[RMDB]
RNA sequence: GGGAACGACUCGAGUAGAGUCGAAAAGGAGGAACCUUCGGGUUCCUCCCAUUACCGAGAACCUUGGUCGGUAUAAACAAGGAACCCUUGGAAACAAGGGAAAUAUUCACGUCUUCGGACGUGAAAAACAACUAAGUUUAUUCGUAAACUUAGUUGUAAAAGAAACAACAACAACAAC
Reactivity to 2A3 in 0.01 (KOAc 150mM, MgCl2 10mM, bicine 150mM(pH8.5), 24C), signal-to-noise 4, nucleotides 027 to 126: g000g010a020g010g010a010a000c020c030u060u070c280g040g000g000u000u000c000c000u000c010c000c000a000u000u040a020c000c000g010a020g010a040a090c020c030u050u040g080g020u050c020g000g010u070a080u170a040a050a000c030a030a030g080g020a070a060c010c000c000u010u010g030g020a050a030a020c000a000a000g010g000g030a010a010a000u030a000u000u010c000a000c000g000u000c000u020u060c150g100g000a000c000g000u000g000a000a000a000a000
Reactivity to DMS in 0.01 (KOAc 150mM, MgCl2 10mM, bicine 150mM(pH8.5), 24C), signal-to-noise 7, nucleotides 027 to 126: g010g010a010g010g000a020a010c000c000u000u020c190g030g020g020u000u000c000c000u000c010c000c020a040u000u000a130c000c000g000a070g000a090a180c010c000u000u000g000g010u000c020g000g000u000a080u010a060a100a090c120a060a070g010g010a140a200c000c000c000u010u010g000g000a160a080a200c000a010a000g010g000g010a020a050a080u010a120u000u000c000a010c000g000u000c000u000u020c200g020g000a010c000g010u000g000a000a010a040a130

An RNA of 177 nucleotides, treated with 2A3 and DMS and read out base by base. High DMS reactivity at an A or C suggests that its Watson-Crick edge is free. The RNA was probed in 150 mM KOAc, 10 mM MgCl2 and 150 mM bicine (pH 8.5) at 24 C. For 2A3, 11,806 sequencing reads were counted. It was measured as part of the RMDB library M2PK50. DMS adducts were read by reverse transcription with MarathonRT.